[RMDB]
RNA sequence: GGGAACGACUCGAGUAGAGUCGAAAAUUCAGAUCGAGAAGAACCGCGUUGCUGCCGCUGAAGCUGCAGCAGCAGGUGAAGCUACCAACUACUCCUCUGAGUCCGCUGAGGCAGCUCCGGCCGCAGCGAGCAGACCCAUAUUCGUAUGGGUCUGCUCAAAAGAAACAACAACAACAAC
Reactivity to DMS in 0.01 (KOAc 150mM, MgCl2 10mM, bicine 150mM(pH8.5), 24C), signal-to-noise 3, nucleotides 027 to 126: u000u010c020a100g010a100u000c080g030a060g020a070a220g000a090a210c030c020g000c150g030u000u010g010c000u000g030c020c200g020c060u000g020a050a060g030c000u010g010c010a010g020c000a000g020c000a050g020g000u000g010a080a070g000c120u000a110c140c090a100a110c070u000a080c040u010c000c080u020c100u020g010a120g020u000c130c030g020c000u010g010a040g000g020c010a040g000c010u010c020c020g000g010c000c120g010c020a010g010c020
Reactivity to 2A3 in 0.01 (KOAc 150mM, MgCl2 10mM, bicine 150mM(pH8.5), 24C), signal-to-noise 2, nucleotides 027 to 126: u070u010c010a010g080a210u100c050g010a020g030a140a020g030a060a050c010c000g050c100g070u050u090g000c000u000g030c000c030g000c060u080g090a110a020g010c000u010g000c000a020g000c000a000g000c010a030g020g020u070g030a060a010g060c040u110a110c060c010a030a040c020u090a070c010u020c040c030u030c070u150g050a040g060u040c020c020g000c010u000g010a010g030g000c010a000g030c010u020c030c040g040g000c030c030g000c010a000g030c010